Conditions: 150 mM KOAc, 10 mM MgCl2 and 150 mM bicine (pH 8.5), 24 C. This 177-nucleotide RNA was probed chemically with 2A3. For 2A3 the reverse transcriptase was SuperScript II with manganese. For 2A3, 744 sequencing reads were counted.
RNA sequence: GGGAACGACUCGAGUAGAGUCGAAAAGAAAAAUGAAACUUGCAAUUAUAUACAAGGAGACAUAACUCCUAAUUCCUUCUUCCUACCUGAAGCAGAAGAAUUUUAAUUGCUUGGAAAAAUAUGAUUUGAAGUGAAUAGUGUUCGCACUAUUCACUUCAAAAGAAACAACAACAACAAC
Reactivity to 2A3 in 0.01 (KOAc 150mM, MgCl2 10mM, bicine 150mM(pH8.5), 24C), signal-to-noise 1, nucleotides 027 to 126: g020a000a020a010a000a020u090g090a060a050a010c010u000u000g000c000a010a000u000u060a080u000a030u020a150c130a080a020g000g010a010g080a030c170a210u210a090a150c020u010c000c040u000a010a010u020u030c020c000u000u000c010u010u000c000c000u010a160c060c100u130g110a030a040g000c060a000g000a200a010g000a000a090u010u010u010u020a010a040u000u000g000c010u010u000g000g160a000a090a090a000a000u180a100u130g080a120u010u000u000